[RMDB]
RNA sequence: GGGAACGACUCGAGUAGAGUCGAAAAAAGAUAUGGACGUACUUGUCAGCUUAUUUAUCAGGCAUUUGGUCGGAAACGACCAACCUCGGGCCUGUGAUAAGCUUGGAUUUAGUACGUCCUAAGUCAAGACGAGAAACAAGUUCGCUUGUUUCUCGUCAAAAGAAACAACAACAACAAC
Reactivity to 2A3 in 0.01 (KOAc 150mM, MgCl2 10mM, bicine 150mM(pH8.5), 24C), signal-to-noise 2, nucleotides 027 to 126: a030a000g110a070u120a050u120g020g000a010c000g020u000a000c000u020u020g030u040c000a020g070c010u000u030a040u080u150u100a300u300c030a000g000g020c000a050u050u070u100g010g000u020c010g010g000a050a110a070c000g010a020c030c000a000a020c030c030u190c220g140g300g020c010c010u030g000u000g010a010u020a000a030g000c030u050u130g070g010a040u300u290u210a000g010u000a010c010g000u010c000c000u000a000a000g000u010c000a000a090
Reactivity to DMS in 0.01 (KOAc 150mM, MgCl2 10mM, bicine 150mM(pH8.5), 24C), signal-to-noise 1, nucleotides 027 to 126: a110a100g000a030u000a300u000g000g010a000c010g000u000a000c000u010u000g000u000c000a030g010c020u000u000a000u000u000u000a070u030c010a040g010g030c020a170u000u010u000g010g000u000c060g000g010a090a170a300c010g000a020c000c000a010a030c300c130u010c230g010g000g010c010c000u010g000u000g000a020u000a000a000g000c000u000u000g020g020a000u000u000u000a010g000u000a000c030g040u000c010c000u020a010a170g000u000c070a120a130
Overview: Conditions: 150 mM KOAc, 10 mM MgCl2 and 150 mM bicine (pH 8.5), 24 C. Chemical mapping of a 177-nucleotide RNA with 2A3 and DMS.